An RNA of 177 nucleotides, treated with 2A3 and DMS and read out base by base. It was measured as part of the RMDB library OK2TST. Conditions: 150 mM KOAc, 10 mM MgCl2 and 150 mM bicine (pH 8.5), 24 C. The DMS profile rests on 10,234 reads. 2A3 adducts were read by reverse transcription with SuperScript II with manganese.
[RMDB]
RNA sequence: GGGAACGACUCGAGUAGAGUCGAAAAAUACGUUACGGUAACCCUCUACCAUCUGGCGGCUGGCAUCAUCAUCUUCAUUAUCAAUGAGUAACGCGAUAUUUCUAUGGCCUUUACCAAUCACGUAUCGGUUAGUAUUAGUCUUCGGACUAAUACUAACAAAAGAAACAACAACAACAAC
Reactivity to 2A3 in 0.01 (KOAc 150mM, MgCl2 10mM, bicine 150mM(pH8.5), 24C), signal-to-noise 7, nucleotides 027 to 126: a000u060a010c020g010u050u030a010c060g020g030u030a020a050c000c020c010u010c010u040a050c020c010a060u040c050u090g050g000c010g060g000c010u020g030g000c010a020u030c000a010u010c000a030u020c060u130u020c040a070u020u160a120u170c060a040a090u080g020a030g080u050a060a030c040g000c020g050a030u020a060u100u110u020c060u050a070u100g050g000c000c000u000u030u030a030c010c010a040a050u090c050a020c060g020u030a040u090c040g060
Reactivity to DMS in 0.01 (KOAc 150mM, MgCl2 10mM, bicine 150mM(pH8.5), 24C), signal-to-noise 7, nucleotides 027 to 126: a070u000a040c050g010u000u000a110c210g010g010u010a060a120c060c010c010u000c050u000a080c040c040a060u000c060u000g020g010c040g010g010c050u000g000g000c030a060u000c060a060u000c040a060u000c040u000u000c040a050u000u000a080u000c150a070a080u010g010a090g010u000a050a060c140g010c070g000a050u000a070u000u000u000c060u010a080u010g010g010c050c040u000u010u000a050c030c030a060a130u000c140a030c060g020u010a040u000c120g020